Chemical mapping of a 207-nucleotide RNA with 2A3. Values are in units of 0.01, from 0 to 300, in steps of 10. Values cover nucleotides 27 to 156. It was measured as part of the RMDB library M2RFPK. The reactions ran in a buffer of 150 mM KOAc, 10 mM MgCl2 and 150 mM bicine (pH 8.5), at 24 C. 2A3 adducts were read by reverse transcription with SuperScript II with manganese.

RNA sequence: GGGAACGACUCGAGUAGAGUCGAAAAGAAAGAAAGAACCCUUCCCGCGGGGCUGGAUCUUCCAGAUGGUGUGGGCCGGGACAAGCCGGAGAGUGUCCCGGUUUCAGAAACAACCUUCGGCAGCCAAACUAGACUACCCACUUCGGUGGGUAGUCAACUUUCCUAACUUCUUCGGAAGUUAGGAAAGAAAAGAAACAACAACAACAAC
Reactivity to 2A3 in 0.01 (KOAc 150mM, MgCl2 10mM, bicine 150mM(pH8.5), 24C), signal-to-noise 1, nucleotides 027 to 156: g000a000a010a000g050a050a080a010g030a110a160c030c010c010u020u020c000c010c010g020c000g010g000g000g000c000u010g010g000a090u140c110u210u020c160c000a000g000a000u020g010g070u040g010u000g020g010g010c000c000g000g010g000a000c000a010a000g000c000c000g010g010a010g000a000g000u010g000u000c000c000c000g000g000u010u010u000c000a000g030a010a020a020c030a020a030c000c000u000u000c000g010g000c010a050g080c070c060a090a070a020c060u100a050g000a000c000u000a000c000c000c000a000c010u020u020c150g080g000u000g000g000g000u000a000g000u010c000a000a000